[RMDB]
RNA sequence: GGGAACGACUCGAGUAGAGUCGAAAAUGCAUGAUAUCAUGCUGACCGGACCGGCCCUGCCUCUGGCCGCGCCGGAUACCCUCAUCAUGGAGGCGCGCAUCGACCUUGCUCGGAAGGGGGUGGGGUGAGGCAACUGAAUGUUCGCAUUCAGUUGCCUAAAAGAAACAACAACAACAAC
Reactivity to DMS in 0.01 (KOAc 150mM, MgCl2 10mM, bicine 150mM(pH8.5), 24C), signal-to-noise 1, nucleotides 027 to 126: u000g000c000a000u000g000a300u030a150u010c010a020u000g000c000u000g020a150c020c000g000g020a100c080c020g010g010c010c000c060u030g000c000c010u000c000u000g020g000c080c020g060c300g000c010c020g000g000a090u000a030c060c000c000u000c140a110u000c170a110u040g010g020a100g000g000c000g040c080g010c060a130u000c010g000a070c020c100u030u000g000c040u000c040g000g010a140a120g000g010g000g050g010u000g000g020g000g030u000g020
Reactivity to 2A3 in 0.01 (KOAc 150mM, MgCl2 10mM, bicine 150mM(pH8.5), 24C), signal-to-noise 2, nucleotides 027 to 126: u060g000c000a000u000g040a080u120a200u300c010a020u010g030c000u000g060a000c000c000g050g050a030c000c000g060g000c000c000c070u060g020c020c010u110c020u010g030g000c010c000g080c040g000c030c000g000g030a010u110a040c020c040c080u080c120a300u030c010a040u170g130g020a010g000g000c010g000c030g000c020a130u130c050g000a040c010c050u110u210g010c020u020c000g190g100a110a100g140g040g010g000g010u040g010g060g010g000u040g060